Source information:
Source: RMDB library OK2TST, as collected in RNAgym. Chemical mapping of a 177-nucleotide RNA with DMS and 2A3. For DMS, 1,256 sequencing reads were counted. The RNA was probed in 150 mM KOAc, 10 mM MgCl2 and 150 mM bicine (pH 8.5) at 24 C. Reactivities are rounded to 0.1 and cut off at 0 and 3.
RNA sequence: GGGAACGACUCGAGUAGAGUCGAAAAUGUCAUUCAAGGGUUGAAUUCCAAACCGCUUCCAUUUGAUUGUAGUGCUUUUAUAACACCUACACAUCUUAAGGAAAAGAUAUCACAACUUGAGUCAACCCACCGCAAAUUAUUUCGAUAAUUUGCGGUGAAAAGAAACAACAACAACAAC
Reactivity to DMS in 0.01 (KOAc 150mM, MgCl2 10mM, bicine 150mM(pH8.5), 24C), signal-to-noise 2, nucleotides 027 to 126: u000g010u000c100a070u000u020c070a090a070g020g020g040u000u000g020a100a200u000u030c090c080a010a090a110c030c050g000c110u010u010c000c000a030u000u000u000g010a010u000u000g000u000a020g020u010g000c070u000u000u030u010a070u020a060a060c050a010c080c040u000a010c010a000c230a000u000c000u000u010a060a060g010g000a000a020a140a110g000a050u020a080u010c090a090c070a150a070c010u000u000g010a020g000u000c020a140a300c020c000
Reactivity to 2A3 in 0.01 (KOAc 150mM, MgCl2 10mM, bicine 150mM(pH8.5), 24C), signal-to-noise 2, nucleotides 027 to 126: u020g000u010c040a020u080u050c040a080a050g100g030g030u040u050g090a080a070u300u040c080c000a080a060a040c060c010g050c070u010u020c000c000a020u000u000u060g000a000u000u010g000u000a010g000u020g060c060u140u120u100u120a240u120a200a000c010a010c020c030u030a000c000a000c000a000u000c000u020u030a040a020g020g000a010a070a040a000g070a020u100a030u090c040a000c020a200a030c020u020u020g000a000g000u000c000a020a080c030c040